[RMDB]
RNA sequence: GGGAACGACUCGAGUAGAGUCGAAAAAGAGAAUGAAGAUUGGUGGAAUUUUUUGGCAUCCAAGUGGGAACAAAGGUAUCUCAGCCCCUUUGGAGGGAAACCUUACUGUCUAAACAGGGAGCCUCCAAGCCCAUUUUAAAUUCGUUUAAAAUGGGCUAAAAGAAACAACAACAACAAC
Reactivity to DMS in 0.01 (KOAc 150mM, MgCl2 10mM, bicine 150mM(pH8.5), 24C), signal-to-noise 3, nucleotides 027 to 126: a080g010a090g010a080a060u000g010a090a070g000a070u000u000g010g040u000g000g000a080a010u000u000u010u010u000u010g010g010c030a090u010c040c060a060a080g030u000g020g000g000a090a060c090a020a070a060g010g000u010a060u000c050u000c040a130g000c030c010c040c120u010u000u000g000g020a050g010g000g000a050a040a110c160c010u000u000a090c100u010g010u000c150u020a080a080a100c100a030g010g000g020a130g020c010c000u000c020c040a060
Reactivity to 2A3 in 0.01 (KOAc 150mM, MgCl2 10mM, bicine 150mM(pH8.5), 24C), signal-to-noise 2, nucleotides 027 to 126: a000g130a030g040a120a130u090g000a050a100g050a050u090u150g040g000u070g000g120a130a110u030u030u020u040u240u300g050g030c040a010u000c030c000a030a100g100u070g010g030g030a030a010c020a050a110a060g050g000u080a090u000c000u000c030a080g030c000c010c000c010u040u130u100g010g000a030g030g020g030a030a070a100c000c000u010u160a110c020u000g070u140c090u200a180a230a020c020a000g030g000g000a000g070c030c080u070c030c000a000